[RMDB]
RNA sequence: GGGAACGACUCGAGUAGAGUCGAAAAGGGAACUCAGUUAGCCAAUCAAGAAUAAUAUCGAUGACCGCAUCUUCUUUGACAUCUAGAUAGUCACAGUUCAUGAUAUUAAACAUGGAAUCAGAUGAAACCCAUCUACGCCGUUCGCGGCGUAGAUGGGAAAAGAAACAACAACAACAAC
Reactivity to 2A3 in 0.01 (KOAc 150mM, MgCl2 10mM, bicine 150mM(pH8.5), 24C), signal-to-noise 1, nucleotides 027 to 126: g190g000g000a070a070c060u060c060a010g120u070u160a020g080c000c050a000a170u120c060a040a030g180a120a000u060a110a030u040a040u050c160g070a010u050g040a000c000c000g130c000a110u000c050u240u000c010u030u000u160g000a070c040a210u180c000u050a120g060a000u050a060g050u000c010a000c110a000g000u120u040c000a020u000g060a000u180a130u250u300a000a070a000c050a050u040g010g030a060a000u010c000a100g000a120u000g130a050a000a000